Description: Structure probing data (DMS and 2A3) for a 177-nucleotide construct. DMS adducts were read by reverse transcription with MarathonRT. 2A3 adducts were read by reverse transcription with SuperScript II with manganese. The RNA was probed in 150 mM KOAc, 10 mM MgCl2 and 150 mM bicine (pH 8.5) at 24 C. Source: RMDB library TTRDEL, as collected in RNAgym. In probing experiments dimethyl sulfate is read out at A N1 and C N3, which are open when not base-paired.

RNA sequence: GGGAACGACUCGAGUAGAGUCGAAAAGAUAUGGACGAUCUGACGCAGCAACAGCUCGGAAACGAGACAUGCUGGUCAGGAUCGUCCUAAGUCAAAACCUUUGCAGAUGUUCGCAUCUGCAAAGGAACUAUUGUGCUCACUUCGGUGAGCACAAUAGAAAAGAAACAACAACAACAAC
Reactivity to DMS in 0.01 (KOAc 150mM, MgCl2 10mM, bicine 150mM(pH8.5), 24C), signal-to-noise 2, nucleotides 027 to 126: g020a050u000a300u010g000g000a010c000g000a010u010c000u000g010a010c010g000c000a020g010c000a020a080c270a180g000c010u000c010g010g000a100a110a190c010g000a000g010a070c070a170u000g010c000u000g000g000u000c000a020g000g020a010u000c000g000u000c000c000u000a000a060g000u000c040a090a110a070a090c000c000u000u000u000g000c000a000g000a000u000g010u000u020c240g030c000a000u000c000u010g000c000a000a010a010g010g000a020a100
Reactivity to 2A3 in 0.01 (KOAc 150mM, MgCl2 10mM, bicine 150mM(pH8.5), 24C), signal-to-noise 2, nucleotides 027 to 126: g010a030u060a030u130g000g000a000c010g000a010u010c000u000g010a000c040g000c300a000g000c000a010a120c040a180g050c010u000c010g000g030a100a070a040c010g010a020g040a070c030a060u060g010c010u010g020g000u030c010a020g060g010a010u000c000g000u010c000c000u000a020a000g000u010c030a000a040a090a240c000c000u000u000u010g000c000a010g000a020u000g070u070u170c280g000c150a000u020c010u020g000c010a000a000a000g010g000a010a000